[RMDB]
An RNA of 207 nucleotides, treated with 2A3 and DMS and read out base by base. Reactivities are given for positions 27 through 156. The RNA was probed in 150 mM KOAc, 10 mM MgCl2 and 150 mM bicine (pH 8.5) at 24 C. 2A3 adducts were read by reverse transcription with SuperScript II with manganese.
RNA sequence: GGGAACGACUCGAGUAGAGUCGAAAACAGGCUGUCCUAGGACUGCCCUAGAUCAUCCCACUGCACUUGUCACUGGGACAUUGGGGUGGAUAAUGAAGCUAUUGGCAGCUUUAAGCAUCAUGUACAAAAGUGCUGCAUGCAGUGCCUAGAAAUCAUGUGACAUUUUUCAAUUCGUUGAAAAAUGUCAAAAAGAAACAACAACAACAAC
Reactivity to 2A3 in 0.01 (KOAc 150mM, MgCl2 10mM, bicine 150mM(pH8.5), 24C), signal-to-noise 5, nucleotides 027 to 156: c040a010g040g010c010u020g020u090c010c010u060a050g010g100a050c020u020g000c000c000c000u050a080g000a090u050c020a010u010c030c030c010a010c020u050g010c020a070c150u100u170g050u200c030a020c090u070g020g060g030a010c000a050u050u070g030g000g000g010u020g000g030a040u040a120a050u200g120a060a040g060c030u050a020u100u130g030g000c030a010g000c000u030u040u030a070a010g010c000a020u050c020a020u140g020u070a040c040a030a200a060a030g070u050g010c000u010g010c030a020u020g000c010a010g030u030g060c000c000u050a050g080a040a090a060u120c090a080u000g030
Reactivity to DMS in 0.01 (KOAc 150mM, MgCl2 10mM, bicine 150mM(pH8.5), 24C), signal-to-noise 4, nucleotides 027 to 156: c060a060g030g010c020u010g020u000c030c060u010a080g010g010a130c020u000g010c010c010c050u000a040g010a140u000c090a100u000c020c010c000a050c040u000g030c000a150c100u010u020g020u000c030a130c100u010g040g030g010a030c050a110u000u000g000g010g030g020u000g010g020a070u000a100a090u000g000a070a110g010c030u000a120u000u010g020g000c050a070g010c010u000u000u000a050a100g010c020a060u000c020a030u020g030u020a120c060a080a090a080a130g020u000g010c030u010g010c050a080u010g020c070a090g020u000g020c020c010u030a100g000a080a070a050u010c060a060u000g010